[RMDB]
RNA sequence: GGGAACGACUCGAGUAGAGUCGAAAAAAUAGCGGGUCAAGGUACAACGCAGAGAGAUAGGCUCAUCCCAAGUUCUCAUCGGAGUACCAAGACUUCGGUACAGAAGAGAUACCGACUCUUCAUAGAAUUCAUCAGUCUAUUUCGAUAGACUGAUGAAAAAAGAAACAACAACAACAAC
Reactivity to 2A3 in 0.01 (KOAc 150mM, MgCl2 10mM, bicine 150mM(pH8.5), 24C), signal-to-noise 3, nucleotides 027 to 126: a000a000u170a070g040c000g020g010g000u000c000a020a050g000g010u010a010c010a030a020c060g040c160a000g040a000g000a000g000a110u050a120g030g000c040u020c060a130u120c000c000c010a010a040g060u080u030c020u000c010a110u040c010g010g000a020g000u000a010c010c000a000a010g000a000c000u100u050c020g040g010u090a040c050a060g010a010a000g000a010g010a010u080a150c000c020g060a050c000u000c010u030u020c000a000u120a050g100a030a150
Reactivity to DMS in 0.01 (KOAc 150mM, MgCl2 10mM, bicine 150mM(pH8.5), 24C), signal-to-noise 5, nucleotides 027 to 126: a100a040u010a040g010c000g000g010g000u010c020a040a300g000g000u000a000c000a050a150c010g020c280a080g010a100g000a020g010a080u010a170g010g020c100u000c280a100u010c250c010c000a080a150g010u010u000c010u000c010a110u010c020g000g000a300g000u000a010c010c000a030a300g000a010c010u000u010c010g010g010u010a030c170a150g000a020a010g000a010g010a070u000a150c030c030g000a150c010u000c000u000u000c010a140u010a170g010a100a120